This 207-nucleotide RNA was probed chemically with 2A3.
RNA sequence: GGGAACGACUCGAGUAGAGUCGAAAAAGCUUAAUUAAGCAGCACGAUCAACCUUGUGGUGGUUCCGCACUUGGAUUGAUCGUCAUUUAGGGACCUCGGCGUGUUGGGUUUUCUCCAGCAGACAUGCUUAAAUUUACUGGGGGAGAGGUCUUAGGGACACUCUCCUCUCGUUCGCGAGAGGAGAGUGAAAAGAAACAACAACAACAAC
Reactivity to 2A3 in 0.01 (KOAc 150mM, MgCl2 10mM, bicine 150mM(pH8.5), 24C), signal-to-noise 1, nucleotides 027 to 156: a000g080c050u110u170a170a110u120u070a170a000g040c000a010g080c130a010c070g030a000u010c000a020a020c010c010u000u000g000u000g010g120u080g000g040u180u000c000c010g060c010a060c050u050u050g000g020a170u090u030g000a010u000c080g050u030c010a070u130u160u130a060g010g010g010a010c000c030u000c000g050g000c020g000u030g010u010u000g000g000g000u040u020u190u020c080u090c050c000a030g000c000a000g010a030c010a000u000g000c000u020u050a040a070a170u190u200u150a110c050u020g000g000g000g010g000a050g010a040g040g000u020c010u030u040a060g050g000g000a000

The data come from the RNA Mapping Database (RMDB), library ARCHII.